[RMDB]
RNA sequence: GGGAACGACUCGAGUAGAGUCGAAAAGAUCCGGUGGCUGUCGAAAGCUGACCGACCCGACACCCGAACUACCUCGACCACCGACCGCGCCGGCGCCCACAACGCCGACGAACUGGUGCUCGACCUCGAAGGGAACACGAAUUGACCACCAACAUGCCCUAUACCCCCAUUUCGAUGGGGGUAUAGGAAAAGAAACAACAACAACAAC
Reactivity to 2A3 in 0.01 (KOAc 150mM, MgCl2 10mM, bicine 150mM(pH8.5), 24C), signal-to-noise 2, nucleotides 027 to 156: g040a010u050c010c010g040g010u000g020g030c020u010g060u130c060g150a220a050a010g000c040u040g170a100c000c010g070a080c030c000c010g030a020c030a070c040c050c050g050a140a060c050u050a090c110c070u010c040g010a010c000c040a010c000c000g120a080c020c050g070c000g000c010c000g000g000c010g000c020c060c020a100c080a050a020c000g020c010c000g010a030c000g000a050a020c090u190g020g020u000g020c000u000c000g010a010c000c030u030c020g030a110a080g000g010g010a030a000c070a000c120g070a010a060u090u080g100a080c020c030a000c030c000a040a030c000a160u180g100c040